[RMDB]
RNA sequence: GGGAACGACUCGAGUAGAGUCGAAAAAUUCUAAUUUUAUAUGGAGAUCUAUGUCAUGGGACAACGAAGUAGCAUUUAAUAACGGAUCAGGUUCUGGUGACGGUAUCGAUAAACCAGUUGUUCCUGACCUUUAAUCUUGUUUCGACAAGAUUAAAGGAAAAGAAACAACAACAACAAC
Reactivity to DMS in 0.01 (KOAc 150mM, MgCl2 10mM, bicine 150mM(pH8.5), 24C), signal-to-noise 3, nucleotides 027 to 126: a180u010u030c050u040a040a050u050u040u040u010a060u020a100u040g000g010a090g000a070u000c030u000a030u080g020u000c020a040u010g000g010g000a020c040a050a030c110g000a090a100g010u000a020g020c080a090u010u010u020a080a090u000a050a080c060g020g020a110u010c050a060g020g020u010u010c020u000g010g060u000g030a090c020g000g010u000a050u010c080g000a140u010a040a070a040c070c050a100g000u000u010g000u010u000c020c010u000g010a300
Reactivity to 2A3 in 0.01 (KOAc 150mM, MgCl2 10mM, bicine 150mM(pH8.5), 24C), signal-to-noise 4, nucleotides 027 to 126: a000u120u000c070u110a120a180u070u080u070u090a270u070a150u170g060g000a090g030a050u010c060u060a110u170g030u000c000a030u060g020g000g050a010c010a090a020c120g040a090a060g000u070a000g070c070a060u100u150u120a150a200u230a140a010c070g100g010a060u010c020a050g080g060u050u020c010u130g070g000u030g000a030c030g020g040u030a030u100c030g040a040u080a030a080a030c030c040a030g000u010u000g000u010u010c000c000u000g050a020
The record gives the reactivity of an RNA of 177 nucleotides to DMS and 2A3.
2A3 adducts were read by reverse transcription with SuperScript II with manganese.
The data come from the RNA Mapping Database (RMDB), library OK1LIB.
Conditions: 150 mM KOAc, 10 mM MgCl2 and 150 mM bicine (pH 8.5), 24 C.
The DMS profile rests on 5,503 reads.